RNA sequence: GGGAACGACUCGAGUAGAGUCGAAAAUCGCGCGGCGUAUAUAAUAGCGGCGCGCUAUUAUGCGCGCUAUCGCCGCGCGGCGAUAUAUAUAAUACGCGCGUAUUAUAUACGCCGCAUAAUACGCCGCAGACAAUACCAUUUUCGAAUGGUAUUGUCUAAAAGAAACAACAACAACAAC
Reactivity to DMS in 0.01 (KOAc 150mM, MgCl2 10mM, bicine 150mM(pH8.5), 24C), signal-to-noise 5, nucleotides 027 to 126: u010c090g000c160g020c000g000g010c010g000u000a010u000a030u000a050a060u000a070g010c040g010g030c020g020c010g020c060u010a030u000u000a040u010g020c080g020c040g010c100u000a020u000c030g020c030c030g020c300g020c120g000g010c010g000a110u010a050u010a070u000a040u000a050a050u000a030c040g010c120g000c120g020u000a010u000u000a010u010a020u000a010c010g000c000c010g010c040a060u010a050a050u000a060c110g010c040c030g020c130
Reactivity to 2A3 in 0.01 (KOAc 150mM, MgCl2 10mM, bicine 150mM(pH8.5), 24C), signal-to-noise 2, nucleotides 027 to 126: u110c020g000c010g000c000g090g000c010g060u000a010u010a020u010a070a210u130a090g220c050g010g030c000g030c010g000c000u030a070u230u110a060u110g020c040g000c010g000c050u030a050u160c030g020c000c000g040c020g000c010g000g010c000g000a000u000a000u000a000u000a000u010a030a130u070a040c050g090c020g000c090g120u050a000u010u010a010u010a000u020a040c000g010c010c000g010c020a000u080a080a010u020a060c040g020c040c030g030c010

This 177-nucleotide RNA was probed chemically with DMS and 2A3. For 2A3 the reverse transcriptase was SuperScript II with manganese. For DMS, 6,590 sequencing reads were counted. The reactions ran in a buffer of 150 mM KOAc, 10 mM MgCl2 and 150 mM bicine (pH 8.5), at 24 C. For 2A3, 3,002 sequencing reads were counted. DMS adducts were read by reverse transcription with MarathonRT. The data come from the RNA Mapping Database (RMDB), library OK2TRN.